[RMDB]
RNA sequence: GGGAACGACUCGAGUAGAGUCGAAAAAAAAAGAUAUGGACAUCGGGAGUCGCCCUCUCAAUGAUGCGAGAUCGGAAACGAUCUCGUUGAGAGAGGGACCCGACGAACGAUGUCCUAAGUCAAAAAAGAUGAAGAGAUGGUUCGCCAUCUCUUCAUCAAAAGAAACAACAACAACAAC
Reactivity to DMS in 0.01 (KOAc 150mM, MgCl2 10mM, bicine 150mM(pH8.5), 24C), signal-to-noise 1, nucleotides 027 to 126: a070a000a090a140a040g000a080u000a030u000g010g010a030c000a000u000c000g030g000g050a300g000u000c050g000c010c000c000u000c000u000c030a300a150u030g000a050u000g000c000g000a020g000a010u000c010g000g020a030a030a070c000g000a000u010c000u000c010g060u000u000g000a020g000a000g000a000g010g010g040a150c260c270c300g000a030c010g000a300a300c040g010a000u000g000u000c000c000u000a000a060g000u000c040a000a040a020a080a030a180
Annotation: The record gives the reactivity of an RNA of 177 nucleotides to DMS. In probing experiments dimethyl sulfate is read out at A N1 and C N3, which are open when not base-paired. Values cover nucleotides 27 to 126. The DMS profile rests on 921 reads. For DMS the reverse transcriptase was MarathonRT.